RNA sequence: GGGAACGACUCGAGUAGAGUCGAAAAGAUAUGGAGCUUCGACAUGCGAUUAGUCAGUGCAACAGCAAGAGCUCGGAAACGAGCUCUUGACAUGCACUGAAUUUCGCAACAGCGAAGCUCCUAAGUCCAAUGGUAAUUCCUUCGGGAAUUACCAUUGAAAAGAAACAACAACAACAAC
Reactivity to DMS in 0.01 (KOAc 150mM, MgCl2 10mM, bicine 150mM(pH8.5), 24C), signal-to-noise 3, nucleotides 027 to 126: g010a080u010a300u000g000g000a010g020c000u000u010c010g020a080c110a270u000g010c000g000a000u020u000a080g000u010c000a010g020u000g010c000a020a090c290a220g000c000a010a000g010a000g000c000u000c000g020g000a120a080a300c010g010a010g010c010u000c000u000u000g000a010c070a180u010g000c000a000c000u000g000a010a050u000u010u020c010g010c000a030a060c300a190g000c000g000a000a000g000c000u000c000c000u000a010a070g000u000c040
Reactivity to 2A3 in 0.01 (KOAc 150mM, MgCl2 10mM, bicine 150mM(pH8.5), 24C), signal-to-noise 2, nucleotides 027 to 126: g080a010u170a130u240g010g010a000g010c000u000u010c010g190a190c100a160u100g000c000g010a030u020u150a110g110u020c010a000g010u000g000c030a180a190c040a280g130c010a010a020g020a000g040c000u000c030g020g000a110a140a040c030g000a010g000c000u000c020u000u000g000a020c000a010u040g030c010a000c000u000g010a000a010u000u040u020c000g000c010a050a050c050a040g110c000g000a000a000g020c010u010c000c000u000a070a020g010u020c020